[RMDB]
The record gives the reactivity of an RNA of 177 nucleotides to DMS and 2A3. The RNA was probed in 150 mM KOAc, 10 mM MgCl2 and 150 mM bicine (pH 8.5) at 24 C. For DMS, 1,391 sequencing reads were counted.
RNA sequence: GGGAACGACUCGAGUAGAGUCGAAAAGAUAUGGAUCCGUGAACUACUCCCGCCCUCGCACUCGGAAACGAGUGAACUACGAGUAACAAGGAGCACGGAUCCUAAGUCAAACGCAUGUUCGCAUGCGGGUGUGGUUUAAGUUCGCUUAAACCACACCAAAAGAAACAACAACAACAAC
Reactivity to DMS in 0.01 (KOAc 150mM, MgCl2 10mM, bicine 150mM(pH8.5), 24C), signal-to-noise 3, nucleotides 027 to 126: g020a020u000a300u000g010g000a020u010c010c020g070u000g010a180a080c100u020a300c020u010c000c000c030g000c300c190c050u000c030g060c000a020c000u000c000g010g030a080a140a210c010g010a000g000u000g000a080a040c100u040a250c060g020a040g020u030a080a220c210a200a090g000g110a040g020c000a030c000g000g030a010u000c000c000u000a020a100g000u000c080a050a230a300c040g010c010a020u010g010u010u030c240g010c000a000u010g010c000g010
Reactivity to 2A3 in 0.01 (KOAc 150mM, MgCl2 10mM, bicine 150mM(pH8.5), 24C), signal-to-noise 2, nucleotides 027 to 126: g030a000u070a010u120g000g000a000u000c000c020g000u000g020a120a140c090u200a040c010u300c020c000c080g160c090c040c020u000c040g090c000a000c000u000c000g030g000a010a000a060c000g000a000g000u020g000a050a030c140u220a040c070g020a000g070u080a120a140c220a300a230g000g000a010g000c000a000c000g000g000a000u000c000c000u000a010a000g020u020c020a160a000a060c030g000c010a010u020g030u080u080c220g010c170a010u000g020c010g060